[RMDB]
RNA sequence: GGGAACGACUCGAGUAGAGUCGAAAAAGCACUAGAGGUACUCACCAUGGUACACUAGGCUGACUAGUCAUCAUGUGCGCACGUACACAGUCAUGAGGAUCACUAUCGUGAUCCUAGUCGCUAGCUACAGCGCGUACUUUUUCGAAAGUACGCGCUGAAAAGAAACAACAACAACAAC
Reactivity to 2A3 in 0.01 (KOAc 150mM, MgCl2 10mM, bicine 150mM(pH8.5), 24C), signal-to-noise 1, nucleotides 027 to 126: a000g110c090a090c130u070a020g040a160g010g060u000a010c010u020c120a180c060c010a040u150g000g050u010a020c000a010c040u020a030g000g110c030u030g030a060c040u010a020g000u050c020a060u000c010a030u120g070u050g030c010g000c070a000c230g060u200a030c100a020c040a080g020u070c030a050u140g050a030g000g000a010u010c000a000c080u210a260u300c270g010u000g000a000u000c030c000u000a000g020u020c000g000c020u010a000g060c010u020a040
Reactivity to DMS in 0.01 (KOAc 150mM, MgCl2 10mM, bicine 150mM(pH8.5), 24C), signal-to-noise 2, nucleotides 027 to 126: a030g010c000a290c010u000a090g020a200g040g020u000a000c010u010c150a140c300c270a040u040g000g000u000a020c060a080c000u000a000g000g000c080u000g010a180c030u000a020g000u000c170a150u000c020a030u000g000u000g000c050g000c070a160c160g000u000a090c100a000c080a030g030u000c080a110u010g010a040g000g000a010u000c000a000c020u000a100u000c240g020u000g000a000u020c000c000u000a010g030u020c100g020c030u000a070g030c090u000a200

This 177-nucleotide RNA was probed chemically with 2A3 and DMS. In probing experiments dimethyl sulfate is read out at A N1 and C N3, which are open when not base-paired. It was measured as part of the RMDB library OK2TRN. For 2A3 the reverse transcriptase was SuperScript II with manganese. The reactions ran in a buffer of 150 mM KOAc, 10 mM MgCl2 and 150 mM bicine (pH 8.5), at 24 C.